About this RNA
Structure probing data (2A3 and DMS) for a 207-nucleotide construct. DMS adducts were read by reverse transcription with MarathonRT. The 2A3 profile rests on 1,868 reads. The reactions ran in a buffer of 150 mM KOAc, 10 mM MgCl2 and 150 mM bicine (pH 8.5), at 24 C.

[RMDB]
RNA sequence: GGGAACGACUCGAGUAGAGUCGAAAAAACUCAGCUAGGGAGAGUAUUACAUUCAUGUUGACGAGACCUAGACGAAACACAGAGGAAAAUUAUUAAUCACUGGAUAGUAUUAGUAAUGACUCUGUGUAAAACUCUUCUACGUUCGCGUAGAAGAGAACUUUACCUAUCUGUUCGCAGAUAGGUAAAGAAAAGAAACAACAACAACAAC
Reactivity to 2A3 in 0.01 (KOAc 150mM, MgCl2 10mM, bicine 150mM(pH8.5), 24C), signal-to-noise 3, nucleotides 027 to 156: a000a000c010u000c000a000g010c010u000a000g000g050g010a070g010a020g080u090a150u160u140a120c080a070u070u190c050a060u160g030u060u060g070a050c050g030a010g060a070c010c000u010a010g010a050c020g010a000a040a000c010a000c000a020g010a020g000g040a090a150a120a000u000u000a000u000u000a010a000u020c030a000c030u050g070g070a120u300a300g010u010a020u000u000a010g000u000a000a020u020g010a010c000u000c000u000g000u010g000u000a000a000a000a000c000u000c000u000u000c000u000a010c000g020u020u050c230g000c000g060u000a000g010a000a000g000a000g000a000a000
Reactivity to DMS in 0.01 (KOAc 150mM, MgCl2 10mM, bicine 150mM(pH8.5), 24C), signal-to-noise 3, nucleotides 027 to 156: a070a040c030u000c010a050g020c000u010a020g000g010g010a160g010a150g010u000a070u000u000a040c050a100u000u000c130a080u000g010u000u000g000a100c050g010a260g030a050c000c010u000a040g010a300c090g010a150a090a050c000a020c010a010g000a020g000g000a030a080a100a040u000u000a010u000u000a010a020u000c100a080c050u000g030g030a220u000a090g030u000a030u000u000a010g020u010a010a030u000g010a180c000u000c010u000g010u000g000u000a010a020a020a090c020u000c000u010u000c000u000a040c000g030u000u010c300g020c020g010u010a010g000a020a000g000a000g020a010a010